[RMDB]
RNA sequence: GGGAACGACUCGAGUAGAGUCGAAAAAGGUGGCCAAAGGGGUUCCAGUUGGGAGACACCAGGCGCACCUCUCCUGCCACCGGGUCGAACAAGCCGCCAAACACCACUGCCUUGAGCACCAAAAGCCAAUUCCCCGAGGAUUCGUCCUCGGGGAAUUAAAAGAAACAACAACAACAAC
Reactivity to DMS in 0.01 (KOAc 150mM, MgCl2 10mM, bicine 150mM(pH8.5), 24C), signal-to-noise 1, nucleotides 027 to 126: a000g000g000u000g040g000c070c020a100a030a140g000g000g030g020u020u020c000c000a180g120u050u050g000g050g000a020g000a080c010a030c000c050a160g000g000c010g000c040a000c070c000u040c010u000c110c000u010g010c070c060a010c020c040g000g020g000u000c020g030a170a110c210a110a080g050c020c000g100c030c000a050a060a060c120a020c030c000a120c050u000g000c020c020u000u010g020a240g060c070a030c030c020a130a070a130a100g020c130c190
Reactivity to 2A3 in 0.01 (KOAc 150mM, MgCl2 10mM, bicine 150mM(pH8.5), 24C), signal-to-noise 2, nucleotides 027 to 126: a040g000g000u000g010g000c000c000a150a070a040g000g020g000g060u080u000c060c000a150g160u270u130g120g030g000a060g020a000c010a010c000c010a010g020g010c120g020c010a000c020c000u000c010u000c000c000u000g030c010c000a020c010c000g070g000g000u010c080g050a050a050c050a060a040g020c010c000g000c010c010a020a020a010c060a000c040c020a020c000u030g000c000c010u040u050g110a060g030c000a040c050c030a060a100a040a000g040c030c000